[RMDB]
RNA sequence: GGGAACGACUCGAGUAGAGUCGAAAAGUUGAAGUGUUCGCACUUCAACAAACGGUCAACUCAUGGAGCGCAAGACGAAUAGCUACAUAUUCGACAUGAGAAAAAGACUGUAGUUCGCUACAGUCAACUACAUCCGAUUCUUCGGAAUCGGAUGUAGAAAAGAAACAACAACAACAAC
Reactivity to 2A3 in 0.01 (KOAc 150mM, MgCl2 10mM, bicine 150mM(pH8.5), 24C), signal-to-noise 2, nucleotides 027 to 126: g000u010u010g010a010a000g000u000g020u020u100c130g040c080a000c010u000u020c010a000a030c010a010a010a000c000g030g100u080c030a050a070c010u010c010a030u010g090g050a100g110c160g010c170a130a010g100a140c030g070a050a030u030a040g080c160u300a090c090a180u070a030u030u020c000g010a010c020a050u030g000a010g030a100a030a010a010a020g000a000c000u000g010u010a000g010u000u050c240g000c110u000a000c000a000g000u000c010a000a000
Reactivity to DMS in 0.01 (KOAc 150mM, MgCl2 10mM, bicine 150mM(pH8.5), 24C), signal-to-noise 2, nucleotides 027 to 126: g040u010u000g000a010a010g050u000g030u000u030c210g000c010a030c010u000u000c000a000a010c010a050a040a090c100g000g010u010c090a080a210c000u000c030a010u000g010g020a160g020c170g040c250a100a050g010a120c030g000a010a020u010a010g020c260u020a090c120a120u000a010u000u000c000g000a160c000a020u010g010a030g010a070a050a110a110a120g000a010c000u000g010u000a020g000u000u020c230g050c000u010a000c000a010g000u000c000a020a070